[RMDB]
RNA sequence: GGGAACGACUCGAGUAGAGUCGAAAAUAGAGGGAUGGAAAGCCCAGUGCCUUGAGUCAGACAGGGCAGGUCCUCAGGAAAUGGCUGAGGAGGUAAUUUUACCACUUGGACCCACUUUUAGGACUUGUGCAGAUAUGAAAUUCGUUUCAUAUCUGCAAAAAGAAACAACAACAACAAC
Reactivity to DMS in 0.01 (KOAc 150mM, MgCl2 10mM, bicine 150mM(pH8.5), 24C), signal-to-noise 7, nucleotides 027 to 126: u010a100g010a110g010g010g010a050u010g020g020a130a100a170g010c020c010c020a170g020u000g010c000c010u000u000g000a170g010u010c110a100g010a150c040a040g010g000g010c010a050g000g010u000c010c000u000c280a060g000g000a050a080a070u000g010g010c010u000g000a020g010g010a060g010g010u030a020a170u020u010u010u000a030c010c000a100c040u010u000g000g000a140c100c010c120a070c170u000u000u000u000a050g010g010a080c030u000u000g020
Reactivity to 2A3 in 0.01 (KOAc 150mM, MgCl2 10mM, bicine 150mM(pH8.5), 24C), signal-to-noise 3, nucleotides 027 to 126: u090a020g130a080g030g040g020a070u090g080g100a160a020a050g010c000c020c030a010g100u040g020c000c000u050u010g030a030g090u140c060a010g020a140c010a010g030g000g000c020a010g030g040u010c000c000u020c020a000g010g070a050a130a100u110g060g020c000u010g000a010g010g050a100g050g020u030a040a160u080u300u230u070a020c030c010a010c010u020u010g060g040a150c010c030c010a040c030u090u100u040u090a040g000g030a020c000u060u110g040